[RMDB]
RNA sequence: GGGAACGACUCGAGUAGAGUCGAAAAGGGGUCACAGGGAGAGCUCGAGGUUCGCGAGAGACAUCUGAAGCCUCCACGGAUGUGGAAUGCGAACCGACGAGCUCGAGGAUCUGUGACGGAGGCACCCAAAACUCUAGAAAGUUCGCUUUCUAGAGAAACGCUAGAUAGGAUUCGUCCUAUCUAGCGUAAAAGAAACAACAACAACAAC
Reactivity to DMS in 0.01 (KOAc 150mM, MgCl2 10mM, bicine 150mM(pH8.5), 24C), signal-to-noise 1, nucleotides 027 to 156: g050g020g000g000u000c000a030c000a010g000g000g030a030g000a050g020c000u010c010g000a100g000g040u000u000c000g010c010g010a180g010a300g010a000c010a030u000c000u000g000a050a160g050c020c000u000c010c040a190c040g010g020a030u010g010u000g000g000a040a080u010g000c010g010a020a010c000c040g000a110c010g020a080g000c000u000c000g000a000g030g000a040u000c000u020g000u000g010a010c000g000g000a010g100g030c000a190c010c010c020a030a050a200a220c000u000c000u000a000g010a030a030a020g010u000u010c300g020c040u010u010u010c010u000a020g010a000g010a020a080
Reactivity to 2A3 in 0.01 (KOAc 150mM, MgCl2 10mM, bicine 150mM(pH8.5), 24C), signal-to-noise 3, nucleotides 027 to 156: g000g020g090g040u010c000a000c000a010g000g000g000a000g000a000g010c020u000c000g010a020g000g020u000u000c010g000c110g050a070g010a000g000a090c000a010u000c000u030g040a110a030g010c000c010u000c000c000a010c000g010g000a000u010g010u010g000g140a170a260u300g000c100g000a040a010c040c030g070a100c040g010a030g010c030u000c000g000a000g000g000a000u000c000u000g000u000g000a000c000g000g000a010g000g010c000a020c010c000c000a100a120a090a100c010u010c000u000a000g000a000a000a020g040u120u120c220g050c180u000u010u000c000u000a000g000a000g000a080a070